The record gives the reactivity of an RNA of 177 nucleotides to 2A3 and DMS. Conditions: 150 mM KOAc, 10 mM MgCl2 and 150 mM bicine (pH 8.5), 24 C. It was measured as part of the RMDB library TTRINS. The DMS profile rests on 9,098 reads.
RNA sequence: GGGAACGACUCGAGUAGAGUCGAAAAGAUAUGGACAAUUCACAGCGAUAAUGGCGUUGAAAUUGUUCGCGAAUCGGAAACGAUUCGCGAACAAUGGAGCCAUUAACGCUGUGAUUGUCCUAAGUCACUAUGCAAUAUAGUUCGCUAUAUUGCAUAGAAAAGAAACAACAACAACAAC
Reactivity to 2A3 in 0.01 (KOAc 150mM, MgCl2 10mM, bicine 150mM(pH8.5), 24C), signal-to-noise 2, nucleotides 027 to 126: g030a000u070a070u190g030g010a000c010a020a020u300u120c010a180c000a000g010c000g010a020u010a040a010u020g020g000c050g220u290u010g000a010a030a000u020u020g000u000u000c000g000c000g020a000a010u010c010g040g030a070a040a050c020g000a010u000u020c010g000c020g020a000a000c000a000a010u000g000g000a000g000c000c000a000u000u000a000a000c020g000c010u010g000u010g000a000u000u000g000u020c000c000u000a000a000g000u010c000a010
Reactivity to DMS in 0.01 (KOAc 150mM, MgCl2 10mM, bicine 150mM(pH8.5), 24C), signal-to-noise 4, nucleotides 027 to 126: g010a060u000a300u000g000g000a000c000a010a010u020u010c010a000c000a010g010c000g010a160u000a000a010u000g000g010c000g010u010u020g010a130a120a020u000u000g010u000u000c010g020c000g000a010a010u000c010g000g000a120a120a220c010g010a020u000u000c000g010c000g010a010a000c000a000a000u000g000g000a100g020c000c000a000u000u000a000a030c000g020c000u000g010u000g000a000u000u000g000u000c000c000u000a000a060g010u010c050a300